Conditions: 150 mM KOAc, 10 mM MgCl2 and 150 mM bicine (pH 8.5), 24 C. An RNA of 177 nucleotides, treated with DMS and 2A3 and read out base by base. For DMS, 1,914 sequencing reads were counted.
[RMDB]
RNA sequence: GGGAACGACUCGAGUAGAGUCGAAAAUGCGGCCCUAAUUUAUUCAGCACGCGACUGCCGCAUCCCGCACGGGAGGCGCAGCUGCUGCAUGACGCUUUAACGUCGCAGCUCACCACCGCCUGACCAUUCGUAGAAUAAACUUCGGUUUAUUCUACGAAAAAGAAACAACAACAACAAC
Reactivity to DMS in 0.01 (KOAc 150mM, MgCl2 10mM, bicine 150mM(pH8.5), 24C), signal-to-noise 3, nucleotides 027 to 126: u010g010c010g000g010c030c150c020u010a040a060u030u000u000a090u050u000c080a110g000c040a080c130g000c070g010a100c090u000g000c050c010g040c040a060u010c030c010c010g010c280a080c170g000g000g000a100g000g010c020g030c080a060g010c090u000g000c000u000g010c010a130u010g010a040c090g000c110u000u010u020a170a160c050g010u000c010g010c000a020g000c030u000c070a120c130c020a070c190c030g000c000c000u000g010a130c050c040a140u000
Reactivity to 2A3 in 0.01 (KOAc 150mM, MgCl2 10mM, bicine 150mM(pH8.5), 24C), signal-to-noise 4, nucleotides 027 to 126: u030g000c010g010g000c040c000c000u060a090a110u080u200u260a210u100u170c080a040g030c060a030c080g070c040g120a060c040u080g020c000c010g000c010a020u040c010c010c000g000c040a080c080g020g000g010a010g000g030c000g000c020a020g010c030u030g010c000u010g000c040a080u130g000a000c000g030c060u210u130u210a170a020c020g000u010c010g000c000a000g000c010u020c020a070c000c040a030c000c020g030c000c000u070g030a110c010c000a040u010

The data come from the RNA Mapping Database (RMDB), library RFMREP.